Chemical mapping of a 177-nucleotide RNA with DMS and 2A3. Source: RMDB library OK2TST, as collected in RNAgym. DMS adducts were read by reverse transcription with MarathonRT. For DMS, 2,921 sequencing reads were counted. As a SHAPE reagent, 2A3 marks flexible, mostly unpaired nucleotides at the ribose 2'-OH. The reactions ran in a buffer of 150 mM KOAc, 10 mM MgCl2 and 150 mM bicine (pH 8.5), at 24 C.

RNA sequence: GGGAACGACUCGAGUAGAGUCGAAAAGAGAAAGGAGACGCGAAGCUUCCACCGCACGUUUUUCUAAUUGAUGAUCGUUAACUGCGUUGGUUGGCGUGAAUUCAUGUGAGAAUAAAGAGGAUCACAAAAAAUCAGUCAGUUUCGACUGACUGAUUUUAAAAGAAACAACAACAACAAC
Reactivity to DMS in 0.01 (KOAc 150mM, MgCl2 10mM, bicine 150mM(pH8.5), 24C), signal-to-noise 3, nucleotides 027 to 126: g010a150g010a060a080a100g020g010a040g010a200c070g010c050g010a110a110g020c050u000u010c020c010a030c060c040g000c060a040c200g010u000u000u010u000u010c030u000a100a090u010u000g000a090u000g010a080u010c090g000u000u000a010a020c040u000g010c100g020u010u020g000g010u010u000g000g000c030g000u000g000a050a080u010u010c020a040u000g000u010g000a060g010a100a080u010a040a080a060g020a130g000g010a120u010c030a050c110a010a050
Reactivity to 2A3 in 0.01 (KOAc 150mM, MgCl2 10mM, bicine 150mM(pH8.5), 24C), signal-to-noise 2, nucleotides 027 to 126: g060a000g030a000a050a000g080g030a070g020a000c040g030c030g150a100a020g070c040u030u000c030c020a040c040c070g000c020a030c070g000u040u000u000u100u030c030u050a150a130u180u100g060a050u100g010a020u090c020g000u000u040a020a010c000u050g070c100g220u150u090g000g060u020u030g020g030c010g000u020g010a040a050u070u030c010a000u050g000u000g050a040g040a070a040u140a090a100a020g110a050g040g040a040u050c040a020c060a040a250